[RMDB]
RNA sequence: GGGAACGACUCGAGUAGAGUCGAAAAGAAACAACUGAAGCUCCCGAGAACCGCUUUUUCUCUAUCUUCCUUGCUUCGGGGCGAGGGUGUUUAGCCCUUGGAACCGCAGUUGGUUCCUCGGAACUAAACUCGUGGUUCCUGUGGUUCACACCUGACCGAUGAUAUCCAUCUUCGGAUGGAUAUCAUCAAAAGAAACAACAACAACAAC
Reactivity to 2A3 in 0.01 (KOAc 150mM, MgCl2 10mM, bicine 150mM(pH8.5), 24C), signal-to-noise 2, nucleotides 027 to 156: g050a010a120a010c070a050a050c060u160g020a080a010g040c030u070c070c060c080g030a030g010a040a080c160c080g070c190u120u160u050u170u090c080u020c040u100a190u120c090u050u070c010c010u080u170g030c020u000u020c010g010g000g030g020c040g020a090g000g000g020u000g010u010u100u030a000g000c000c000c000u040u050g000g000a000a000c000c020g010c020a010g000u010u020g000g000u000u000c010c000u040c130g090g000a010a010c010u090a180a090a050c000u070c140g020u010g000g000u000u020c000c000u010g020u110g000g000u030u030c030a000c000a000c000c020u040g050a030c010c060
Notes
Chemical mapping of a 207-nucleotide RNA with 2A3. Conditions: 150 mM KOAc, 10 mM MgCl2 and 150 mM bicine (pH 8.5), 24 C. The data come from the RNA Mapping Database (RMDB), library VIROID. For 2A3 the reverse transcriptase was SuperScript II with manganese.